[RMDB]
RNA sequence: GGGAACGACUCGAGUAGAGUCGAAAAGAUAUGGACGCACUACCCACCUCGUACCGCUCGUCGGAAACGACGAGAACUACGAUACGAGAGGUGCGUCCUAAGUCAAAGGCCGUGUUCGCACGGCCAAGUAAUCGACUGUCUUCGGACAGUCGAUUACAAAAGAAACAACAACAACAAC
Reactivity to DMS in 0.01 (KOAc 150mM, MgCl2 10mM, bicine 150mM(pH8.5), 24C), signal-to-noise 1, nucleotides 027 to 126: g020a080u000a150u000g000g030a000c000g000c000a000c020u000a060c000c000c000a300c020c000u010c030g010u000a030c010c030g070c010u000c000g000u010c000g000g020a090a140a150c010g000a000c000g000a000g000a010a000c240u020a260c030g050a030u000a000c010g000a000g000a140g000g000u000g010c020g000u000c000c000u020a000a090g010u000c050a100a120a100g000g010c000c000g040u000g010u000u030c260g070c040a000c020g000g000c000c000a000a030
Source information: The record gives the reactivity of an RNA of 177 nucleotides to DMS. The DMS profile rests on 787 reads. High DMS reactivity at an A or C suggests that its Watson-Crick edge is free. The data come from the RNA Mapping Database (RMDB), library TTRDEL. Conditions: 150 mM KOAc, 10 mM MgCl2 and 150 mM bicine (pH 8.5), 24 C.